[RMDB]
RNA sequence: GGGAACGACUCGAGUAGAGUCGAAAAUACUUAGUACGCGCGUAGUUGCAGGCAUUCCGGGUGCAGCAACUGACGCGGAAGACUUUUCCCAGAGUGUGCGCUGCAACUGGCGUGCUGAGUAGUGCACGAAUUGCACGUACGUUCGCGUACGUGCAAAGUUGACGCUAUAGUUCGCUAUAGCGUCAACAAAAGAAACAACAACAACAAC
Reactivity to 2A3 in 0.01 (KOAc 150mM, MgCl2 10mM, bicine 150mM(pH8.5), 24C), signal-to-noise 3, nucleotides 027 to 156: u030a000c000u000u000a000g000u000a000c010g040c010g000c050g230u140a030g000u020u010g000c010a010g000g040c010a040u050u030c040c060g130g020g030u070g110c040a050g000c070a140a110c080u070g090a040c080g010c050g070g000a010a030g100a020c010u060u070u080u050c010c000c030a000g050a040g020u040g000u010g010c240g010c130u000g010c000a060a050c030u020g020g000c000g000u000g020c000u000g000a000g010u010a020g040u040g080c050a020c140g060a110a210u070u010g010c010a000c000g000u010a000c000g000u000u050c190g010c010g050u010a000c010g010u000g000c000a000a000a010
Reactivity to DMS in 0.01 (KOAc 150mM, MgCl2 10mM, bicine 150mM(pH8.5), 24C), signal-to-noise 1, nucleotides 027 to 156: u000a100c030u020u000a070g060u010a060c050g070c000g040c110g030u010a040g000u000u010g030c010a070g010g040c000a030u000u010c070c200g080g030g070u000g080c090a260g010c050a060a160c060u000g040a080c030g000c090g020g020a070a160g020a180c080u000u000u010u010c010c000c010a140g000a120g010u030g000u030g020c050g030c000u010g000c020a030a050c050u020g000g000c060g060u000g020c020u020g010a090g000u010a050g050u000g000c020a110c080g020a180a260u000u010g000c000a000c000g000u000a010c000g010u000u000c300g020c030g080u000a010c000g080u030g030c020a000a010a050
Chemical mapping of a 207-nucleotide RNA with 2A3 and DMS. It was measured as part of the RMDB library M2RFOK. Conditions: 150 mM KOAc, 10 mM MgCl2 and 150 mM bicine (pH 8.5), 24 C. For 2A3 the reverse transcriptase was SuperScript II with manganese.